An RNA of 177 nucleotides, treated with 2A3 and DMS and read out base by base. For DMS, 91,888 sequencing reads were counted. 2A3 adducts were read by reverse transcription with SuperScript II with manganese. Reactivities are given for positions 27 through 126. Conditions: 150 mM KOAc, 10 mM MgCl2 and 150 mM bicine (pH 8.5), 24 C.
[RMDB]
RNA sequence: GGGAACGACUCGAGUAGAGUCGAAAAGGGCUGAGCACUUUUGAUGCUUCGGCAUCUUGUGGCAGUUUAUACGAACCGGUAAGUAUAUACUGCUUGGAUACGAACCGGUAAGUAUCCCUCUGCCCAAGGGAACGGGAAGGUUCGCCUUCUUGUUCCCAAAAGAAACAACAACAACAAC
Reactivity to 2A3 in 0.01 (KOAc 150mM, MgCl2 10mM, bicine 150mM(pH8.5), 24C), signal-to-noise 9, nucleotides 027 to 126: g030g010g000c020u030g010a050g120c030a020c030u090u110u100u240g030a030u010g000c010u030u030c090g070g000c000a020u010c010u020u040g020u050g020g030c000a010g010u060u110u120a030u000a000c010g020a120a070c010c000g010g010u040a050a010g020u000a010u010a010u030a090c050u070g150c060u090u180g060g020a010u010a010c000g010a090a060c010c000g000g000u010a020a010g000u000a010u010c010c000c000u000c020u030g010c000c000c000a030a080
Reactivity to DMS in 0.01 (KOAc 150mM, MgCl2 10mM, bicine 150mM(pH8.5), 24C), signal-to-noise 9, nucleotides 027 to 126: g010g000g020c010u000g000a070g020c010a030c010u010u020u020u030g000a020u000g000c000u010u050c170g020g000c000a010u000c000u010u000g010u010g000g000c000a010g010u030u010u020a020u000a010c010g000a240a100c010c000g000g000u000a050a300g010u000a000u010a050u020a160c080u010g000c110u020u020g000g010a020u000a010c000g000a230a100c010c000g000g000u000a020a270g000u000a000u000c020c020c020u000c030u010g010c000c000c010a110a120